[RMDB]
RNA sequence: GGGAACGACUCGAGUAGAGUCGAAAAGAUAUGGACGGAGCUUCAACAGCUCCCUCCUCGGAAACGAGGAAGGAGACAUGAAGGCUCCGUCCUAAGUCAAAGUCGCAGGCGUUCGCGCCUGCGACAACCUUAACCUGAACUUCGGUUCAGGUUAAGGAAAAGAAACAACAACAACAAC
Reactivity to 2A3 in 0.01 (KOAc 150mM, MgCl2 10mM, bicine 150mM(pH8.5), 24C), signal-to-noise 2, nucleotides 027 to 126: g010a000u050a020u070g000g000a000c000g000g000a000g000c010u050u050c050a300a300c120a300g000c000u040c000c000c000u020c010c010u000c000g000g040a060a050a020c030g000a020g010g010a000a000g030g000a020g010a050c260a300u150g050a010a000g060g040c000u000c000c000g020u000c000c000u000a000a000g000u000c000a010a060a080g010u000c000g000c010a010g120g030c020g080u230u250c300g020c070g000c180c030u010g010c000g010a010c000a020a000
Reactivity to DMS in 0.01 (KOAc 150mM, MgCl2 10mM, bicine 150mM(pH8.5), 24C), signal-to-noise 1, nucleotides 027 to 126: g010a030u000a300u000g000g010a040c010g020g000a010g000c010u000u000c040a070a080c070a070g020c000u000c020c000c010u010c000c000u000c000g020g010a080a100a150c000g000a020g000g000a000a020g020g000a000g000a020c220a080u000g000a160a060g020g000c000u000c000c000g000u010c000c000u000a000a100g000u010c030a150a130a170g010u000c000g000c020a000g000g010c000g060u010u000c260g050c040g060c000c000u000g030c020g010a000c000a010a090
Overview: Source: RMDB library TTRDES, as collected in RNAgym. This 177-nucleotide RNA was probed chemically with 2A3 and DMS. For 2A3 the reverse transcriptase was SuperScript II with manganese. Reactivities are rounded to 0.1 and cut off at 0 and 3. High 2A3 reactivity points to a flexible backbone, as in loops and unpaired stretches.